Chemical mapping of a 177-nucleotide RNA with 2A3 and DMS. DMS adducts were read by reverse transcription with MarathonRT. The data come from the RNA Mapping Database (RMDB), library OK2TST.

RNA sequence: GGGAACGACUCGAGUAGAGUCGAAAAAGCAGCACCUGCAAAAUACGCUGGUGCGCAUUGACCUCAGCGGUAAGACACCGGUGUAUCGCGGCAUAAUGCUGCGCGACUUUUCGGGCUUGCGGGCGUGCUAUGCCGAAUCGUUCGCGAUUCGGCAUAGAAAAGAAACAACAACAACAAC
Reactivity to 2A3 in 0.01 (KOAc 150mM, MgCl2 10mM, bicine 150mM(pH8.5), 24C), signal-to-noise 2, nucleotides 027 to 126: a000g010c060a000g000c000a020c010c000u040g010c050a050a070a070a090u180a040c100g010c000u030g000g010u000g000c030g010c010a030u050u170g100a080c000c010u010c040a050g040c020g050g030u040a050a040g070a070c050a030c120c020g000g060u020g000u010a050u060c020g010c030g040g000c020a050u100a190a050u300g010c000u020g000c010g010c020g020a030c040u040u050u170u210c030g030g050g040c050u050u080g030c060g020g080g010c030g020u050g000
Reactivity to DMS in 0.01 (KOAc 150mM, MgCl2 10mM, bicine 150mM(pH8.5), 24C), signal-to-noise 2, nucleotides 027 to 126: a080g010c020a050g030c020a030c030c070u010g000c020a080a070a160a030u010a050c110g000c000u000g000g010u000g020c090g000c080a010u020u020g000a100c040c020u000c170a120g000c120g000g000u000a050a040g010a170c050a000c010c000g010g000u000g000u000a050u000c040g020c090g000g030c040a150u000a110a130u020g020c010u000g000c000g000c060g000a030c060u000u000u030u010c070g020g010g000c050u000u000g000c060g000g000g010c040g000u010g000